[RMDB]
RNA sequence: GGGAACGACUCGAGUAGAGUCGAAAAGAUAUGGAAUCAGCAACAGCUAUACAUCGGAAACGAUGUGAUAGACAUGCUGGUUCCUAAGUCAAACACCCAGGUAUCUCUUCGGAGAUACCUGGGUGAACUAAUGUUGCAUGUUCGCAUGCAACAUUAGAAAAGAAACAACAACAACAAC
Reactivity to DMS in 0.01 (KOAc 150mM, MgCl2 10mM, bicine 150mM(pH8.5), 24C), signal-to-noise 4, nucleotides 027 to 126: g000a020u000a240u010g010g010a010a010u000c010a000g010c000a040a080c250a170g000c000u000a000u000a020c000a000u000c000g010g000a070a050a110c000g000a010u000g000u000g020a020u000a000g010a200c050a150u000g000c000u010g000g010u000u000c000c000u000a010a080g000u000c020a130a140a240c010a000c000c000c000a000g000g010u000a000u000c000u000c000u000u000c220g040g000a010g000a010u010a000c000c010u000g000g000g010u000g000a000a080
Reactivity to 2A3 in 0.01 (KOAc 150mM, MgCl2 10mM, bicine 150mM(pH8.5), 24C), signal-to-noise 2, nucleotides 027 to 126: g010a010u040a020u130g000g000a010a010u010c000a000g030c000a010a110c030a260g040c000u020a000u000a030c000a000u010c010g050g020a050a060a020c010g000a000u010g020u030g030a010u010a000g110a140c030a030u050g000c010u000g010g000u000u000c000c000u010a010a010g000u000c000a040a100a090c010a000c010c000c020a010g050g000u000a010u000c010u000c000u030u140c300g150g000a000g010a010u000a000c010c000u000g010g000g010u000g010a000a000